Chemical mapping of a 207-nucleotide RNA with 2A3 and DMS. Values are in units of 0.01, from 0 to 300, in steps of 10. DMS adducts were read by reverse transcription with MarathonRT. The 2A3 profile rests on 5,968 reads. Reactivities are given for positions 27 through 156.
RNA sequence: GGGAACGACUCGAGUAGAGUCGAAAAGGGGUCCACUCCGGAAGCCACAGCUUUUGACGCUCUGAAGCCUCCACGGAGCGAUAAGCUGUGGAACUACUUCCGUGAGUGGACGGAGGCACCCAAAAGGUAUUAUCGCUGUUCGCAGCGAUAAUACCAACUAUCUACUACUCUUCGGAGUAGUAGAUAGAAAAGAAACAACAACAACAAC
Reactivity to 2A3 in 0.01 (KOAc 150mM, MgCl2 10mM, bicine 150mM(pH8.5), 24C), signal-to-noise 5, nucleotides 027 to 156: g040g000g030g000u010c000c000a000c000u000c000c000g010g010a000a000g010c000c000a000c000a010g020c020u170u230u300u300g160a100c060g000c000u000c000u030g050a130a030g010c000c000u010c010c000a010c020g000g000a000g010c000g070a090u110a290a050g000c010u000g000u030g000g020a000a000c010u230a060c000u010u000c000c010g030u080g000a000g000u000g000g000a000c000g000g000a000g010g020c000a030c010c000c020a040a130a020a100g000g000u000a000u000u000a000u000c000g000c000u000g060u100u090c270g020c130a000g000c010g010a000u000a000a000u000a000c000c000a000a000
Reactivity to DMS in 0.01 (KOAc 150mM, MgCl2 10mM, bicine 150mM(pH8.5), 24C), signal-to-noise 1, nucleotides 027 to 156: g010g010g040g010u010c000c020a050c010u000c020c020g030g000a030a060g000c040c020a040c060a060g030c020u010u020u020u030g000a270c100g000c040u010c010u000g010a070a110g010c010c010u000c000c030a300c020g010g020a050g030c000g020a110u000a030a060g030c010u000g020u000g010g000a000a010c050u010a300c000u000u000c010c040g020u020g000a040g020u000g020g010a030c000g000g010a010g000g050c020a160c030c000c010a090a040a120a170g030g080u000a010u010u000a010u010c010g030c000u000g010u000u030c260g030c020a030g010c000g000a010u000a000a000u000a000c000c000a040a030